[RMDB]
RNA sequence: GGGAACGACUCGAGUAGAGUCGAAAAGAUAUGGAUCCGGUAUACCAGCGAGGAUCGGAACUCGGAAACGAGUUCCGGGAGCUGAAUACCCGGAUCCUAAGUCAAAGUCUCUGCUUCGGCAGAGACAUCAUACACGAUUGUUCGCAAUCGUGUAUGAAAAAGAAACAACAACAACAAC
Reactivity to 2A3 in 0.01 (KOAc 150mM, MgCl2 10mM, bicine 150mM(pH8.5), 24C), signal-to-noise 2, nucleotides 027 to 126: g010a010u060a020u130g000g000a000u010c010c030g000g030u070a110u080a200c290c040a000g010c020g050a300g020g040a000u000c010g000g000a010a000c000u010c000g010g020a020a030a040c000g000a000g000u000u010c010c000g000g010g010a010g000c010u020g070a080a060u090a130c070c080c000g000g000a000u010c000c000u000a020a000g020u030c020a190a100a030g010u000c000u030c000u010g010c010u020u090c300g170g000c020a000g020a000g000a010c010a000
Reactivity to DMS in 0.01 (KOAc 150mM, MgCl2 10mM, bicine 150mM(pH8.5), 24C), signal-to-noise 5, nucleotides 027 to 126: g010a060u000a300u010g000g000a020u000c000c010g000g010u000a070u000a160c300c020a020g010c000g010a100g020g010a040u010c000g000g010a000a010c000u010c000g010g000a100a070a160c010g010a020g010u000u000c000c000g000g000g010a030g030c000u000g000a100a050u000a060c240c020c030g010g000a010u000c000c000u000a010a080g000u000c020a100a160a190g010u000c000u010c000u000g000c010u000u010c280g040g010c000a000g010a010g000a000c000a020
Chemical mapping of a 177-nucleotide RNA with 2A3 and DMS. It was measured as part of the RMDB library TTRDES. 2A3 adducts were read by reverse transcription with SuperScript II with manganese. The reactions ran in a buffer of 150 mM KOAc, 10 mM MgCl2 and 150 mM bicine (pH 8.5), at 24 C. For DMS the reverse transcriptase was MarathonRT.